RNA sequence: GGGAACGACUCGAGUAGAGUCGAAAAGCUCUUUGGCCGGUCGCCGGGUGCUUUGCUGCUCGCGGGCCCGGCCUGGGUCCUGCUCGCGCCCGCCUCUGUCGGUGGUCUGGGUUGGUCGGCCGUCCUCGAUUUUUAACUAAUUCGUUAGUUAAAAAUCAAAAGAAACAACAACAACAAC
Reactivity to 2A3 in 0.01 (KOAc 150mM, MgCl2 10mM, bicine 150mM(pH8.5), 24C), signal-to-noise 2, nucleotides 027 to 126: g020c010u020c000u220u070u190g000g000c040c030g020g020u050c050g040c130c000g010g040g030u110g070c040u300u290u240g040c080u090g030c000u000c050g060c030g010g050g010c110c120c010g000g000c010c000u010g030g000g020u030c000c010u020g000c000u020c000g070c000g010c040c010c000g020c010c020u150c120u160g250u230c070g040g050u040g020g030u000c050u080g050g000g050u130u270g040g010u040c000g020g020c000c010g020u020c000c000u040c030
Reactivity to DMS in 0.01 (KOAc 150mM, MgCl2 10mM, bicine 150mM(pH8.5), 24C), signal-to-noise 3, nucleotides 027 to 126: g000c070u000c050u010u010u000g010g020c010c030g010g020u000c070g010c070c010g000g000g030u000g010c030u000u010u010g010c070u010g010c040u000c090g000c070g000g010g000c140c010c040g010g010c080c040u010g000g010g010u000c010c030u000g020c040u000c080g010c110g000c060c020c010g000c030c040u010c100u010g010u010c140g010g010u000g000g010u000c040u000g010g010g020u000u000g020g010u000c030g010g000c010c030g000u000c030c010u000c180
Structure probing data (2A3 and DMS) for a 177-nucleotide construct. Values cover nucleotides 27 to 126. It was measured as part of the RMDB library OK2TRN. For DMS, 7,270 sequencing reads were counted. Conditions: 150 mM KOAc, 10 mM MgCl2 and 150 mM bicine (pH 8.5), 24 C.